The data come from the RNA Mapping Database (RMDB), library TTRINS.
The record gives the reactivity of an RNA of 177 nucleotides to DMS and 2A3.
2A3 adducts were read by reverse transcription with SuperScript II with manganese.
Reactivities are given for positions 27 through 126.
The DMS profile rests on 1,309 reads.
[RMDB]
RNA sequence: GGGAACGACUCGAGUAGAGUCGAAAAGAUAUGGAAGAGAAGAGCCGUUGAAAUAUGGCGGGGAAUUAACUAUAUCGGAAACGAUAUAGUUAAUACCCUACCAUAUGGAGGCUCCUCUUCCUAAGUCGUUCACUACAAAGUUCGCUUUGUAGUGAACAAAAGAAACAACAACAACAAC
Reactivity to DMS in 0.01 (KOAc 150mM, MgCl2 10mM, bicine 150mM(pH8.5), 24C), signal-to-noise 1, nucleotides 027 to 126: g000a070u020a300u000g000g020a010a020g000a020g000a150a080g000a000g020c020c000g000u000u000g000a230a190a010u000a000u010g000g020c030g020g000g010g000a180a030u000u000a000a020c020u000a000u010a010u000c000g010g000a150a120a210c000g030a010u010a010u000a000g000u000u000a000a000u010a040c000c000c010u000a040c000c000a000u000a010u000g000g020a070g010g000c020u010c010c000u000c000u000u010c000c000u000a030a100g010u000c150
Reactivity to 2A3 in 0.01 (KOAc 150mM, MgCl2 10mM, bicine 150mM(pH8.5), 24C), signal-to-noise 1, nucleotides 027 to 126: g050a040u170a060u250g010g020a040a000g020a000g110a300a110g000a040g000c030c050g190u300u060g000a000a050a000u000a000u020g000g000c000g000g000g000g000a040a000u020u010a000a000c000u000a000u020a010u020c000g020g020a120a050a020c010g000a000u010a010u000a020g000u000u000a000a000u000a000c010c020c000u000a030c000c000a000u000a000u050g000g030a010g000g010c000u000c000c000u000c000u000u000c000c000u000a070a010g080u010c070